RNA sequence: GGGAACGACUCGAGUAGAGUCGAAAAGAUAUGGAAGUAAGGACAUGAGCUGUCGGAAACGAUGGCUCAACAGCCUUGACUUCCUAAGUCAAAUCGCUUUCAAGUGGUUCGCCACUUGAAAGCGAAAGUCAACUUGCAUGUUCGCAUGCAAGUUGACAAAAGAAACAACAACAACAAC
Reactivity to DMS in 0.01 (KOAc 150mM, MgCl2 10mM, bicine 150mM(pH8.5), 24C), signal-to-noise 1, nucleotides 027 to 126: g010a070u020a300u000g000g010a000a000g030u000a000a000g000g020a120c070a160u000g000a000g000c010u010g000u000c000g010g010a070a120a130c000g000a030u000g010g030c010u000c000a010a020c300a190g000c020c000u000u000g030a000c000u000u010c000c000u020a020a090g000u010c060a050a150a160u000c000g000c000u000u000u000c000a070a010g010u000g010g000u000u010c250g020c000c000a000c000u000u010g010a000a000a010g030c010g040a010a020a090